[RMDB]
RNA sequence: GGGAACGACUCGAGUAGAGUCGAAAAGCCGAUGAAUUGCCGAGAAGCCUGGCUCGAAAUCGUCGACGCAUCGACGACGGUCCUGCCAUGAGACCGUAACGAGGACAUGUCGCCUCGAAUGGCGACGUAUAACAUGAGUGGUUCGCCACUCAUGUAACAACAUGCUGAUCUUCGGAUCAGCAUGUUGAAAAGAAACAACAACAACAAC
Reactivity to 2A3 in 0.01 (KOAc 150mM, MgCl2 10mM, bicine 150mM(pH8.5), 24C), signal-to-noise 4, nucleotides 027 to 156: g040c020c010g030a040u160g030a050a190u160u110g040c030c020g040a050g030a090a030g010c050c090u100g010g040c030u020c050g040a090a090a050u010c010g000u000c000g000a050c120g000c160a150u080c020g010a010c010g000a010c000g000g000u020c020c020u070g050c020c020a020u040g020a030g000a100c000c000g020u040a020a010c000g000a020g000g030a010c030a130u190g010u120c050g000c000c030u050c070g060a050a080u140g000g010c010g020a000c000g040u160a130u060a160a000c000a010u000g000a000g000u020g030g040u040u080c160g020c060c000a000c000u000c000a000u000g010u010a000a000
Reactivity to DMS in 0.01 (KOAc 150mM, MgCl2 10mM, bicine 150mM(pH8.5), 24C), signal-to-noise 2, nucleotides 027 to 156: g030c020c020g020a120u000g020a040a070u010u000g070c030c000g020a080g010a140a160g000c060c050u000g000g000c020u000c020g010a110a080a020u000c040g040u010c000g000a080c140g050c100a130u000c020g010a050c000g000a050c000g060g000u000c000c000u010g060c020c290a130u030g010a110g000a030c000c000g020u010a050a060c030g020a140g000g000a050c050a100u000g030u000c020g000c020c000u000c040g020a080a070u000g020g010c000g020a020c040g010u000a030u010a080a070c000a030u000g000a000g010u000g010g030u000u000c300g000c040c000a030c000u000c000a000u000g020u000a010a110

Notes: The data come from the RNA Mapping Database (RMDB), library M2RFPK. Chemical mapping of a 207-nucleotide RNA with 2A3 and DMS. For 2A3, 2,124 sequencing reads were counted. The RNA was probed in 150 mM KOAc, 10 mM MgCl2 and 150 mM bicine (pH 8.5) at 24 C.